[RMDB]
Conditions: 150 mM KOAc, 10 mM MgCl2 and 150 mM bicine (pH 8.5), 24 C.
Structure probing data (2A3 and DMS) for a 177-nucleotide construct.

RNA sequence: GGGAACGACUCGAGUAGAGUCGAAAAUUUCUCUGAUUAUGUGUCUCGAAACAUGGCAGAAAGUGAGGGGGAACGGUCCUUGCGACACUGGUUGCUACUAUAUGAGCUUCUAGUUACUAUAUACCCGCAUUCUUUACCUGUUCGCAGGUAAAGAAUGAAAAGAAACAACAACAACAAC
Reactivity to 2A3 in 0.01 (KOAc 150mM, MgCl2 10mM, bicine 150mM(pH8.5), 24C), signal-to-noise 8, nucleotides 027 to 126: u030u040u010c030u000c010u010g110a180u050u160a080u130g060u010g040u000c030u020c140g080a090a090a070c050a050u060g050g000c030a010g080a090a080a020g110u090g030a070g010g010g000g000g020a020a050c030g030g000u030c010c000u020u080g030c040g050a010c010a000c070u000g010g000u010u010g030c010u040a140c040u080a110u070a160u300g060a010g000c000u010u010c010u020a020g010u030u040a040c080u010a010u030a030u050a190c010c010c030g000
Reactivity to DMS in 0.01 (KOAc 150mM, MgCl2 10mM, bicine 150mM(pH8.5), 24C), signal-to-noise 8, nucleotides 027 to 126: u010u020u010c020u010c020u020g010a120u010u020a040u020g010u010g010u000c040u010c090g010a140a110a100c090a050u020g010g010c000a030g010a060a070a070g000u010g000a130g000g000g010g000g010a060a110c130g000g000u010c020c020u000u010g020c100g010a070c080a030c020u000g000g010u000u000g000c010u000a050c100u020a130u010a090u020g010a080g000c040u000u010c030u000a070g000u010u010a060c100u010a060u010a110u010a120c020c010c010g000